The data come from the RNA Mapping Database (RMDB), library TTRINS. The record gives the reactivity of an RNA of 177 nucleotides to DMS.
RNA sequence: GGGAACGACUCGAGUAGAGUCGAAAAGAUAUGGACUUCGAUGAGUACCUGGAGAAACAAUUACAAUCCACGUCGGAAACGACGUGGAUUGUAAUUGGUCCCUCCCUGUACGAGAAGUCCUAAGUCACCUACCAACAAAGUUCGCUUUGUUGGUAGGAAAAGAAACAACAACAACAAC
Reactivity to DMS in 0.01 (KOAc 150mM, MgCl2 10mM, bicine 150mM(pH8.5), 24C), signal-to-noise 3, nucleotides 027 to 126: g010a060u010a300u000g000g000a010c000u000u000c000g010a210u000g030a300g000u000a000c000c040u010g000g020a020g000a150a070a140c000a010a020u000u000a000c000a000a000u000c010c000a020c000g030u010c010g000g000a140a090a280c000g010a010c000g050u010g010g000a000u000u000g010u000a010a000u000u000g010g000u000c300c140c010u000c000c010c050u000g000u000a010c010g000a150g000a010a030g000u000c000c010u000a010a050g010u000c020a280
For DMS the reverse transcriptase was MarathonRT. Values cover nucleotides 27 to 126.